[RMDB]
RNA sequence: GGGAACGACUCGAGUAGAGUCGAAAAUAUACGUAGAGCAUGGGUAUCUCUUUUAAUUCGAUAUUAUUUGGAAUUUCCAUGAUUUUAUAUCCAGUCGGUGAUUUUUGUUCAGGUUGAACAACAAAAGUAUUCUCCUGCUAUUCGUAGCAGGAGAAUAAAAAGAAACAACAACAACAAC
Reactivity to DMS in 0.01 (KOAc 150mM, MgCl2 10mM, bicine 150mM(pH8.5), 24C), signal-to-noise 2, nucleotides 027 to 126: u010a110u010a050c130g010u000a020g000a020g000c030a020u000g000g020g000u000a010u010c000u000c010u000u000u000u000a010a050u010u000c170g010a120u010a060u000u000a010u000u000u000g000g000a050a050u000u000u000c010c000a060u000g000a060u010u000u010u000a030u010a110u010c040c020a060g020u020c100g040g020u010g010a070u000u000u000u000u000g010u000u000c040a130g020g030u010u000g020a040a070c050a030a060c250a020a060a020a080g000
Structure probing data (DMS) for a 177-nucleotide construct. DMS adducts were read by reverse transcription with MarathonRT. The RNA was probed in 150 mM KOAc, 10 mM MgCl2 and 150 mM bicine (pH 8.5) at 24 C. Reactivities are given for positions 27 through 126. Source: RMDB library OK2TST, as collected in RNAgym.